Background: Structure probing data (2A3 and DMS) for a 177-nucleotide construct. 2A3 adducts were read by reverse transcription with SuperScript II with manganese. The 2A3 profile rests on 899 reads.
RNA sequence: GGGAACGACUCGAGUAGAGUCGAAAAGAAAAAGUGGCGCCAAUCGAGAUUUUUGAGACCCUAGGCUCAAAAAUAAGGCAUAGAAUUCCAAAGGAAGUCGCUGCCGUGAGCACAACCUAAGAAAAACUCAUUUUUUCGGUUUCGACCGAAAAAAUGAAAAAGAAACAACAACAACAAC
Reactivity to 2A3 in 0.01 (KOAc 150mM, MgCl2 10mM, bicine 150mM(pH8.5), 24C), signal-to-noise 2, nucleotides 027 to 126: g040a020a080a060a000a000g050u050g000g000c030g000c060c050a030a050u130c080g000a000g030a160u000u060u000u010u000g050a030g040a110c010c080c090u010a030g070g000c000u000c030a010a010a010a010a050u080a160a000g060g020c000a030u030a030g010a000a050u120u060c040c030a150a000a010g000g000a070a030g040u100c030g000c010u000g000c000c000g070u030g050a040g000c020a040c000a000a020c020c010u070a050a010g150a080a090a000a000a000c030
Reactivity to DMS in 0.01 (KOAc 150mM, MgCl2 10mM, bicine 150mM(pH8.5), 24C), signal-to-noise 1, nucleotides 027 to 126: g000a170a060a090a050a110g020u040g010g000c040g020c040c060a030a140u030c040g000a160g000a040u000u000u000u000u000g020a000g030a120c090c050c030u020a120g080g010c010u000c050a000a040a000a000a010u000a070a150g000g000c050a050u030a220g000a030a060u000u010c000c050a040a130a220g000g000a030a080g010u000c100g000c160u000g000c030c000g000u010g000a120g000c040a120c110a140a060c080c010u010a020a140g000a020a110a050a140a020c250
About this RNA:
DMS adducts were read by reverse transcription with MarathonRT.